RNA sequence: GGGAACGACUCGAGUAGAGUCGAAAAGAUAUGGAUCAGAGCUAGCCUACGACUCGGAAACGAGUCUAUAGGCUUGGACCUCUAUCCUAAGUCAAAACUACGGCUAUUGUUCGCAAUAGCCGUAGAACGCACAAUUCAUCUUCGGAUGAAUUGUGCGAAAAGAAACAACAACAACAAC
Reactivity to DMS in 0.01 (KOAc 150mM, MgCl2 10mM, bicine 150mM(pH8.5), 24C), signal-to-noise 2, nucleotides 027 to 126: g000a050u000a300u010g000g000a010u010c150a020g000a030g000c010u000a010g030c000c000u000a020c300g000a010c000u000c010g000g000a060a170a150c000g030a010g000u000c000u010a040u000a010g020g000c010u000u000g020g000a080c300c000u000c000u000a080u000c000c000u000a040a230g010u000c010a090a080a130a200c000u000a000c000g000g000c000u010a000u010u030g000u000u010c170g020c000a030a000u000a010g000c000c000g010u000a000g010a090a060